RNA sequence: GGGAACGACUCGAGUAGAGUCGAAAAGUCAAGAUGUGUAGGAUAGGUGGGAGGCUUUGAAGUGUGCACGCCAGUCUGCAUGGAGCCGACCUUGAAAUACCACCCUUUAAUGGAAAAACAAAGUGAAGUCAGAUCAACGAUUCGUCGUUGAUCUGACAAAAGAAACAACAACAACAAC
Reactivity to DMS in 0.01 (KOAc 150mM, MgCl2 10mM, bicine 150mM(pH8.5), 24C), signal-to-noise 1, nucleotides 027 to 126: g010u000c030a160a120g010a070u000g020u020g000u000a020g000g040a160u000a020g010g040u010g020g020g000a180g050g030c020u010u000u000g010a130a020g000u010g010u010g000c090a010c070g040c110c170a110g000u020c050u000g000c030a000u010g000g030a020g030c050c010g000a150c180c010u010u000g000a040a010a110u000a030c000c030a010c000c010c020u000u000u000a080a130u030g010g010a010a050a090a070a060c140a050a040a040g000u010g030a110a060

The data come from the RNA Mapping Database (RMDB), library M2PK90.
This 177-nucleotide RNA was probed chemically with DMS.
The reactions ran in a buffer of 150 mM KOAc, 10 mM MgCl2 and 150 mM bicine (pH 8.5), at 24 C.